Structure probing data (DMS and 2A3) for a 207-nucleotide construct. For DMS, 6,081 sequencing reads were counted. It was measured as part of the RMDB library M2RFPK.
[RMDB]
RNA sequence: GGGAACGACUCGAGUAGAGUCGAAAAUCAUUGAGAUGCUGGGCGCUAUGGUCGUCCUCCUCCGGCUGACCUCCUUCUCAGCUGCUGACCGGCGCCGCACAGGCGGCAUUUCAGCUUCGUGUGCAAAAAAAGAAUGGUCGGUUCGCCGACCAUUCAACGUAUCCUACUAGUUCGCUAGUAGGAUACGAAAAGAAACAACAACAACAAC
Reactivity to DMS in 0.01 (KOAc 150mM, MgCl2 10mM, bicine 150mM(pH8.5), 24C), signal-to-noise 2, nucleotides 027 to 156: u000c070a140u010u020g010a050g010a020u010g000c020u000g000g000g020c020g030c010u010a050u010g060g010u000c010g020u000c040c060u000c020c030u000c050c010g000g000c010u000g010a040c060c090u000c130c070u010u010c070u010c000a050g000c000u000g000c060u000g000a050c030c010g010g010c020g040c010c010g050c040a060c090a060g010g000c030g000g040c020a040u000u010u000c050a070g020c080u010u010c120g000u020g020u000g010c030a000a000a080a110a120a130a220g010a040a000u000g010g010u000c000g010g040u000u010c300g030c010c000g030a020c000c010a000u000u000c000a040a100
Reactivity to 2A3 in 0.01 (KOAc 150mM, MgCl2 10mM, bicine 150mM(pH8.5), 24C), signal-to-noise 3, nucleotides 027 to 156: u080c030a050u010u150g010a020g020a020u050g010c030u060g030g000g000c030g000c020u070a140u300g050g020u040c040g050u060c020c030u040c000c010u040c020c010g000g010c000u020g020a020c010c070u130c040c020u210u100c040u020c030a010g000c010u040g020c100u090g010a000c010c010g000g000c000g010c010c000g030c000a060c010a040g110g040c020g000g010c010a020u010u050u020c020a030g020c040u130u140c100g100u070g030u030g100c070a100a140a010a000a010a000a010g000a000a000u000g000g000u000c020g010g030u060u090c200g050c090c010g010a000c000c000a000u000u000c000a000a000